[RMDB]
RNA sequence: GGGAACGACUCGAGUAGAGUCGAAAACUGGCCAGGGUAGCUCGGUGGUCGCCGGGCCCAACGAGGUCGAGCCCGCCUGGCAGCGCGCGGCAGGCCAUCAAGUACAGCCGCAGACUGGGGGAGUGAGCUCCGAUCCUAGAUUCGUCUAGGAUCGGAGAAAAGAAACAACAACAACAAC
Reactivity to 2A3 in 0.01 (KOAc 150mM, MgCl2 10mM, bicine 150mM(pH8.5), 24C), signal-to-noise 2, nucleotides 027 to 126: c050u030g050g000c050c030a060g030g000g030u080a050g050c030u010c060g000g050u070g020g110u090c060g030c000c000g040g000g000c000c010c010a060a030c080g110a060g000g040u050c000g020a070g050c010c010c010g030c000c030u040g100g030c020a020g040c010g000c020g010c000g050g040c000a010g030g000c050c000a070u160c030a050a010g030u030a060c010a010g040c000c010g000c010a000g010a050c020u030g000g000g010g000g010a060g030u160g080a020g050
Reactivity to DMS in 0.01 (KOAc 150mM, MgCl2 10mM, bicine 150mM(pH8.5), 24C), signal-to-noise 3, nucleotides 027 to 126: c030u000g010g000c010c010a020g020g000g000u040a060g000c020u000c050g010g030u000g000g020u010c030g010c030c030g000g020g000c090c020c070a100a130c110g000a090g030g020u020c030g010a050g010c030c030c070g000c000c040u010g010g020c000a110g000c150g000c300g020c040g000g000c000a090g030g000c020c050a100u020c190a080a140g010u020a050c100a120g000c000c000g030c050a070g020a160c040u000g000g010g000g000g000a130g020u020g010a130g030